[RMDB]
RNA sequence: GGGAACGACUCGAGUAGAGUCGAAAAUGGUGAGAUCUCACUGCAGUUUGAUUGGCAUUUCCCUGAGGCUAACAGAUUCAGCUUUUGAUGGAAGCAUCUGGAAGGAUGGUGUCAGCAUCAACCGAAAUGGGAAGGGUGGAGUGAGCUGGCUGGGUUGAAAUCUAACUCGGUUCGCCGAGUUAGAUUUAAAAGAAACAACAACAACAAC
Reactivity to 2A3 in 0.01 (KOAc 150mM, MgCl2 10mM, bicine 150mM(pH8.5), 24C), signal-to-noise 1, nucleotides 027 to 156: u180g000g000u100g010a090g000a120u000c020u000c080a000c030u070g030c020a060g000u010u130u120g130a160u000u090g050g000c060a070u000u000u090c000c000c000u010g060a020g020g030c040u020a060a010c010a000g030a060u090u140c040a050g010c010u000u100u150u070g130a110u120g040g010a040a030g040c000a020u020c020u020g070g060a090a060g100g010a050u070g010g030u050g050u070c040a020g080c020a110u010c000a030a060c040c010g090a060a090a100u190g020g000g030a000a050g030g020g000u040g000g000a040g020u040g010a000g020c020u000g040g010c010u010g040g000g000u070u050g020